Chemical mapping of a 177-nucleotide RNA with 2A3 and DMS.
2A3 is a SHAPE reagent: it acylates the 2'-hydroxyl of flexible nucleotides of all four kinds.
Reactivities are given for positions 27 through 126.
DMS adducts were read by reverse transcription with MarathonRT.
The 2A3 profile rests on 2,397 reads.
RNA sequence: GGGAACGACUCGAGUAGAGUCGAAAAGGAAAGCACAUGAAGCACGCGAAGCUCGGCAAGCACAUGAAGCACUACAAGCAGUACAAGCAGCGCAAGCAGUAGAAGCAGCCGAAGCAGUACAAAAAAAUCUAUCAAAGAUGUUCGCAUCUUUGAUAGAAAAAGAAACAACAACAACAAC
Reactivity to 2A3 in 0.01 (KOAc 150mM, MgCl2 10mM, bicine 150mM(pH8.5), 24C), signal-to-noise 2, nucleotides 027 to 126: g070g010a130a060a010g060c020a020c020a080u070g060a030a000g000c010a010c040g040c020g090a070a010g010c030u040c040g000g010c020a010a060g030c030a030c000a080u100g070a090a040g000c030a010c070u060a020c050a070a020g040c010a010g040u040a040c030a070a060g040c030a020g000c040g000c070a040a040g000c000a010g030u100a040g040a090a020g010c020a010g010c020c000g000a040a010g000c010a010g040u100a050c120a030a070a000a010a000a000a090
Reactivity to DMS in 0.01 (KOAc 150mM, MgCl2 10mM, bicine 150mM(pH8.5), 24C), signal-to-noise 3, nucleotides 027 to 126: g030g000a110a070a100g020c050a080c030a050u010g010a120a110g000c040a050c100g020c040g000a080a070g030c050u000c070g000g020c070a080a090g010c040a060c100a070u000g000a080a070g000c020a050c060u000a030c080a090a110g000c040a050g030u010a090c130a080a090g000c040a080g020c060g010c090a070a090g020c020a050g020u000a030g010a100a080g010c050a070g020c050c040g010a030a080g010c050a050g010u010a040c080a000a000a040a060a050a060a090